[RMDB]
RNA sequence: GGGAACGACUCGAGUAGAGUCGAAAAGAGUCAUACAACCCCAGAAACCAUUCCUUAUACCUUGAGUAUUGCUGAAUUCAGUUUAGCGUGCAUGCUCUUGGCUAUUCUCAUAGUGAGUGUCAAAUUUAAAACGACGAUGACUUCGGUCAUCGUCGAACUUGCUAACUUCGUUCGCGAAGUUAGCAAGAAAAGAAACAACAACAACAAC
Reactivity to 2A3 in 0.01 (KOAc 150mM, MgCl2 10mM, bicine 150mM(pH8.5), 24C), signal-to-noise 2, nucleotides 027 to 156: g020a010g040u050c050a030u160a220c050a070a160c030c010c050c010a020g150a040a030a000c060c010a030u000u080c000c000u120u120a030u030a160c010c010u020u070g010a030g030u010a100u300u230g000c000u010g030a240a130u150u100c050a110g220u060u140u050a050g040c020g010u090g050c030a010u030g020c000u000c000u000u000g030g010c000u020a010u150u040c050u020c090a100u070a080g030u080g110a000g000u050g070u110c040a050a080a190u220u210u240a030a080a060a010c040g000a000c020g000a000u030g000a000c030u030u020c290g040g000u000c000a000u000c030g000u000c000g000a000a000
An RNA of 207 nucleotides, treated with 2A3 and read out base by base. Values cover nucleotides 27 to 156. The reactions ran in a buffer of 150 mM KOAc, 10 mM MgCl2 and 150 mM bicine (pH 8.5), at 24 C. 2A3 adducts were read by reverse transcription with SuperScript II with manganese.